[RMDB]
RNA sequence: GGGAACGACUCGAGUAGAGUCGAAAACAAAAGUUAGCCAGGUGUGGUGGUCCCAACUACUUGGGAGGCUGAGGUGGGAGGAUUGGUUGAGCCCAGGGAGUUGAGGCUGCAGUGAGCUGUGAUUGCAACACUGCACUUCAGCGUGGGCAACAGAGUAGAUUUAAAUAUGAUUCGUCAUAUUUAAAUCAAAAGAAACAACAACAACAAC
Reactivity to 2A3 in 0.01 (KOAc 150mM, MgCl2 10mM, bicine 150mM(pH8.5), 24C), signal-to-noise 4, nucleotides 027 to 156: c030a020a130a040a020g110u130u100a030g020c010c040a030g040g050u070g010u040g060g040u020g030g030u030c010c010c000a030a050c080u180a020c020u040u050g010g020g010a040g030g000c090u090g020a020g060g060u150g060g010g010a040g030g010a070u060u150g040g020u020u060g030a010g000c000c000c020a020g070g080g020a140g010u010u010g000a010g040g000c160u000g000c000a000g000u010g010a030g000c030u050g050u180g190a230u150u300g000c000a070a080c000a020c020u010g000c010a000c010u010u010c000a000g010c010g040u030g010g000g000c010a010a010c040a020g080a010g070u150a030
Reactivity to DMS in 0.01 (KOAc 150mM, MgCl2 10mM, bicine 150mM(pH8.5), 24C), signal-to-noise 2, nucleotides 027 to 156: c030a130a130a120a150g030u000u010a140g020c020c030a080g000g050u000g050u000g020g030u000g020g010u000c000c000c000a080a090c040u000a040c090u020u010g010g000g000a080g020g050c070u020g020a060g000g040u020g010g020g020a110g000g000a120u000u020g020g000u000u010g040a280g000c010c020c000a120g020g020g020a160g010u000u000g000a040g030g010c130u010g010c010a040g030u000g010a300g020c030u010g040u010g030a210u000u000g020c030a050a110c030a030c010u000g010c040a070c040u000u000c010a020g020c000g010u000g010g020g010c000a050a060c040a110g000a070g000u010a140